Structure probing data (DMS and 2A3) for a 177-nucleotide construct.
DMS adducts were read by reverse transcription with MarathonRT.
Reactivities are given for positions 27 through 126.
The RNA was probed in 150 mM KOAc, 10 mM MgCl2 and 150 mM bicine (pH 8.5) at 24 C.
2A3 adducts were read by reverse transcription with SuperScript II with manganese.
For 2A3, 1,919 sequencing reads were counted.
The data come from the RNA Mapping Database (RMDB), library M2PK50.
[RMDB]
RNA sequence: GGGAACGACUCGAGUAGAGUCGAAAAAUAAGUCCUUUCGAGGACUUAUAAUGCUCCCCAAAGAGGACCUGGGGGUGUCUGGGCUGCUAAACUCAUCAGCCGUGGCUUUGGGGUUCGCCCCAAAGAAGAUUAAAUUAACUUUCGAGUUAAUUUAAUCAAAAGAAACAACAACAACAAC
Reactivity to DMS in 0.01 (KOAc 150mM, MgCl2 10mM, bicine 150mM(pH8.5), 24C), signal-to-noise 3, nucleotides 027 to 126: a020u000a000a010g010u000c000c000u000u000u020c150g010a020g010g010a000c000u010u000a010u000a040a070u010g010c190u000c000c000c000c200a030a100a160g000a090g000g000a040c040c060u010g010g010g000g010g010u010g000u010c050u000g020g020g010c010u000g010c180u010a040a090a110c140u010c120a060u010c020a040g000c020c020g030u000g010g000c010u000u000u000g000g000g010g000u000u010c190g010c000c000c000c000a000a000a040g010a070a100
Reactivity to 2A3 in 0.01 (KOAc 150mM, MgCl2 10mM, bicine 150mM(pH8.5), 24C), signal-to-noise 1, nucleotides 027 to 126: a000u000a000a000g000u000c000c000u010u000u070c120g100a020g000g000a000c000u000u000a000u020a010a030u050g010c020u070c040c020c010c010a100a160a040g080a100g020g040a030c000c070u080g040g010g010g060g020u030g030u030c040u120g030g020g000c000u020g020c000u130a150a120a190c060u040c120a060u030c010a080g000c020c020g010u040g080g000c000u000u010u000g000g010g000g000u040u040c180g050c010c010c000c000a000a010a000g010a010a010